[RMDB]
RNA sequence: GGGAACGACUCGAGUAGAGUCGAAAAGUUUCUGACCUAUCAGGUUCCGACGGUUGGGUAUUGGCCAACCGUGCCUAUAACGGGUAACGGGGGAUUAGGGUUUGAUUUCGGAGAGGGAGCAUGAGAGUGGCUAUUAACUAUUCGUAGUUAAUAGCCAAAAAGAAACAACAACAACAAC
Reactivity to 2A3 in 0.01 (KOAc 150mM, MgCl2 10mM, bicine 150mM(pH8.5), 24C), signal-to-noise 8, nucleotides 027 to 126: g010u010u010u010c030u030g110a070c010c000u050a120u130c080a050g030g020u040u030c030c020g020a020c010g030g010u010u010g020g020g020u190a260u150u240g150g110c000c000a000a000c000c000g000u000g010c010c000u140a120u060a210a040c120g000g000g020u040a090a050c050g020g000g010g020g040a080u060u150a070g020g030g050u050u090u130g170a200u040u130u180c040g020g000a040g010a030g080g010g010a020g020c050a060u150g050a050g010a000g130
Reactivity to DMS in 0.01 (KOAc 150mM, MgCl2 10mM, bicine 150mM(pH8.5), 24C), signal-to-noise 8, nucleotides 027 to 126: g010u000u000u010c020u000g010a110c040c010u010a090u020c110a070g010g000u020u010c060c030g010a070c010g000g010u000u000g010g010g020u010a130u020u030g020g020c000c000a010a020c000c010g010u000g000c040c030u000a100u020a100a120c170g000g010g000u000a070a100c060g000g000g000g000g000a110u030u020a130g000g010g000u000u020u020g010a110u010u020u010c100g010g000a100g000a110g000g000g000a090g010c130a060u010g010a100g000a110g020
This 177-nucleotide RNA was probed chemically with 2A3 and DMS. Source: RMDB libraries RFM100 and RFMREP, as collected in RNAgym. 2A3 adducts were read by reverse transcription with SuperScript II with manganese. Conditions: 150 mM KOAc, 10 mM MgCl2 and 150 mM bicine (pH 8.5), 24 C. Values are in units of 0.01, from 0 to 300, in steps of 10. For DMS the reverse transcriptase was MarathonRT. Values cover nucleotides 27 to 126.